[RMDB]
RNA sequence: GGGAACGACUCGAGUAGAGUCGAAAAGCCAUGAGUCGCAACGCAAAGCCGCGGCAAGUGGAGUUAGCGAGAAGAGAGUAGGCUUUGGUUUCUUCAAGUGAAGCGGUCACCAAUCAGGUGUGGUAGUAGGAGCCUGCAUGGUUCGCCAUGCAGGCAACCAUUAUUGUCCGUUCGCGGACAAUAAUGGAAAAGAAACAACAACAACAAC
Reactivity to DMS in 0.01 (KOAc 150mM, MgCl2 10mM, bicine 150mM(pH8.5), 24C), signal-to-noise 1, nucleotides 027 to 156: g020c010c020a050u010g010a300g000u020c010g120c000a030a050c010g010c050a150a110a220g010c010c010g030c020g020g010c060a010a300g000u010g010g010a080g000u000u010a030g010c080g000a120g000a080a070g010a060g000a070g020u000a040g000g030c040u000u000u000g010g030u000u000u000c040u000u000c030a080a120g000u000g020a060a100g000c070g020g010u010c020a050c020c040a050a080u000c120a060g000g020u020g040u000g020g000u000a060g010u000a050g020g000a150g000c000c000u010g030c000a010u000g030g000u000u000c230g000c050c000a060u000g000c020a020g000g000c010a000a000
Reactivity to 2A3 in 0.01 (KOAc 150mM, MgCl2 10mM, bicine 150mM(pH8.5), 24C), signal-to-noise 3, nucleotides 027 to 156: g050c010c010a010u060g020a010g020u010c000g030c030a050a100c070g020c100a150a180a010g050c070c020g020c020g010g040c060a050a040g020u020g030g030a070g040u070u150a070g010c100g030a020g040a160a040g060a010g020a020g040u100a030g040g000c000u050u030u060g040g040u040u060u010c020u080u050c050a100a070g010u040g100a060a010g020c010g060g030u050c020a020c020c010a030a080u110c050a060g040g010u030g020u040g040g060u060a050g010u020a050g020g120a030g000c000c000u000g000c000a000u000g000g020u040u040c070g010c060c000a000u000g000c000a000g020g000c000a000a000